Source: RMDB library RNAMAK, as collected in RNAgym. An RNA of 207 nucleotides, treated with 2A3 and read out base by base. For 2A3, 933 sequencing reads were counted. Reactivities are given for positions 27 through 156.

[RMDB]
RNA sequence: GGGAACGACUCGAGUAGAGUCGAAAAGGGGUCCUUGACAAACAUCUUGGAUUUACUUUCGAGGUAUACCUGAAGCCUCCACGGGUAUACUACCCACCGAAAGUUGUCAGAUGCUAGUCAAGGACGGAGGCACCCAAAACCAAUGUUCGCAUUGGAAGAGCCUUUAAUGGUUCGCCAUUAAAGGCUCAAAAGAAACAACAACAACAAC
Reactivity to 2A3 in 0.01 (KOAc 150mM, MgCl2 10mM, bicine 150mM(pH8.5), 24C), signal-to-noise 1, nucleotides 027 to 156: g010g000g020g010u010c030c010u000u010g000a010c020a050a250a010c000a020u000c020u190u300g090g000a010u260u130u260a070c000u000u000u000c000g000a000g020g010u000a000u000a000c000c000u000g020a110a010g000c030c000u000c000c000a020c000g010g010g020u000a000u000a030c000u010a080c060c060c040a090c040c000g010a010a000a010g000u030u030g020u000c090a090g010a020u000g000c060u090a040g010u000c000a000a000g010g000a000c000g000g000a000g020g000c020a050c010c000c000a010a080a060a050c030c000a010a000u020g040u100u090c280g000c110a010u010u050g030g010a040a040

For 2A3 the reverse transcriptase was SuperScript II with manganese.